[RMDB]
RNA sequence: GGGAACGACUCGAGUAGAGUCGAAAAGAUAUGGACAGAACUACACGGGGAGUACGCGUUGAAAUCGGAAACGAUGGAGCGUAUGAAAGACGUGCUGUCCUAAGUCAAAGCGGUGUUCGCACCGCAACAGUAUGAACAAGUUCGCUUGUUCAUACUGAAAAGAAACAACAACAACAAC
Reactivity to DMS in 0.01 (KOAc 150mM, MgCl2 10mM, bicine 150mM(pH8.5), 24C), signal-to-noise 9, nucleotides 027 to 126: g000a040u000a300u010g000g010a010c010a010g000a090a030c070u020a300c010a020c010g010g000g010g020a300g020u000a010c000g010c000g000u010u010g000a110a120a020u000c000g010g000a090a080a150c000g010a010u000g000g010a130g010c010g010u000a010u000g000a110a100a150g000a070c020g010u000g000c010u000g000u000c000c000u000a030a090g000u000c040a080a110a130g010c000g010g020u000g010u000u010c220g010c010a020c000c000g020c010a030a040
Reactivity to 2A3 in 0.01 (KOAc 150mM, MgCl2 10mM, bicine 150mM(pH8.5), 24C), signal-to-noise 9, nucleotides 027 to 126: g020a020u070a030u120g010g000a000c010a010g030a110a060c100u230a050c230a020c020g010g000g020g020a100g040u010a000c010g020c020g180u290u080g050a100a110a010u010c010g010g020a050a040a030c010g000a000u020g030g050a040g000c000g000u010a020u040g080a030a050a020g270a030c010g000u010g000c000u000g000u000c000c000u020a090a020g050u020c050a030a080a080g000c010g000g000u020g030u070u170c280g050c100a000c000c000g000c010a000a000
Description:
The record gives the reactivity of an RNA of 177 nucleotides to DMS and 2A3. For DMS, 19,621 sequencing reads were counted. The RNA was probed in 150 mM KOAc, 10 mM MgCl2 and 150 mM bicine (pH 8.5) at 24 C. Source: RMDB library TTRDEL, as collected in RNAgym. For 2A3 the reverse transcriptase was SuperScript II with manganese. Reactivities are rounded to 0.1 and cut off at 0 and 3.